An RNA of 177 nucleotides, treated with 2A3 and DMS and read out base by base.
The 2A3 profile rests on 2,337 reads.
[RMDB]
RNA sequence: GGGAACGACUCGAGUAGAGUCGAAAAGAAGAGAAUACAUGGCUGACAAAACCCUGUCCCUACCUCCACGUGGUGUCGGCUGGAUAAUGCUGCAUUAUGUUGCAUUUAUCAACUGGGAAGGAGAAGACCAGGACUAGUACUUCGGUACUAGUCCUGGAAAAGAAACAACAACAACAAC
Reactivity to 2A3 in 0.01 (KOAc 150mM, MgCl2 10mM, bicine 150mM(pH8.5), 24C), signal-to-noise 4, nucleotides 027 to 126: g070a020a000g080a000g080a070a020u110a040c100a090u100g040g000c020u030g030a020c000a020a040a040a140c020c000c010u030g060u020c000c000c000u010a030c000c040u070c040c060a080c120g080u120g010g000u010g010u020c010g010g010c010u040g010g000a000u010a000a000u010g020c010u050g000c000a110u170u200a100u300g040u030u030g000c020a000u030u020u110a020u030c000a000a090c020u020g030g000g020a030a020g050g030a060g030a090a040g060a030
Reactivity to DMS in 0.01 (KOAc 150mM, MgCl2 10mM, bicine 150mM(pH8.5), 24C), signal-to-noise 2, nucleotides 027 to 126: g010a040a040g010a160g000a070a010u020a120c080a100u030g000g000c020u020g000a020c090a070a060a110a080c000c010c080u020g000u010c000c010c000u020a050c080c010u000c020c040a060c080g060u030g000g000u000g000u040c030g000g000c100u010g060g000a000u000a030a010u020g010c000u000g000c020a200u030u080a120u090g050u020u000g010c070a010u010u000u000a000u020c010a060a070c100u000g000g020g020a030a110g020g020a090g030a130a050g030a160

For DMS, 2,435 sequencing reads were counted. The data come from the RNA Mapping Database (RMDB), library OK1LIB.